An RNA of 177 nucleotides, treated with 2A3 and DMS and read out base by base. DMS adducts were read by reverse transcription with MarathonRT. For 2A3 the reverse transcriptase was SuperScript II with manganese.
[RMDB]
RNA sequence: GGGAACGACUCGAGUAGAGUCGAAAAGGUGCGGGAGGAGGUGGAACGCGUGGCGUCCCAUGCGGAUGCCGUCUUGGAGAGCACCCGGGAGCUCUCCCGGAAGGGUGAGGAGAACCUCGCGGCCUACCAUUGCUUCGAAUUUCGAUUCGAAGCAAUGAAAAGAAACAACAACAACAAC
Reactivity to 2A3 in 0.01 (KOAc 150mM, MgCl2 10mM, bicine 150mM(pH8.5), 24C), signal-to-noise 2, nucleotides 027 to 126: g070g000u190g050c050g050g020g030a070g020g020a050g000g070u090g020g040a120a020c030g000c040g070u050g020g000c020g000u010c020c000c010a150u300g040c210g030g000a010u010g000c000c010g020u000c010u010u000g020g010a050g000a000g030c000a050c030c020c030g070g020g030a010g000c000u000c000u000c000c020c000g000g040a050a020g060g000g010u090g030a080g060g020a110g030a050a050c010c010u030c020g040c020g020g030c000c010u020a040c030
Reactivity to DMS in 0.01 (KOAc 150mM, MgCl2 10mM, bicine 150mM(pH8.5), 24C), signal-to-noise 4, nucleotides 027 to 126: g010g020u010g000c080g000g000g020a120g000g000a110g010g020u000g000g000a090a070c080g010c080g020u010g010g020c040g030u000c020c000c020a100u010g010c160g000g010a040u000g010c010c010g000u000c030u000u000g000g010a080g000a050g010c020a040c100c060c070g010g010g010a030g000c050u000c020u000c000c000c030g010g000a050a070g000g000g020u010g000a110g010g000a170g000a090a110c060c020u000c030g000c040g010g010c050c030u010a120c190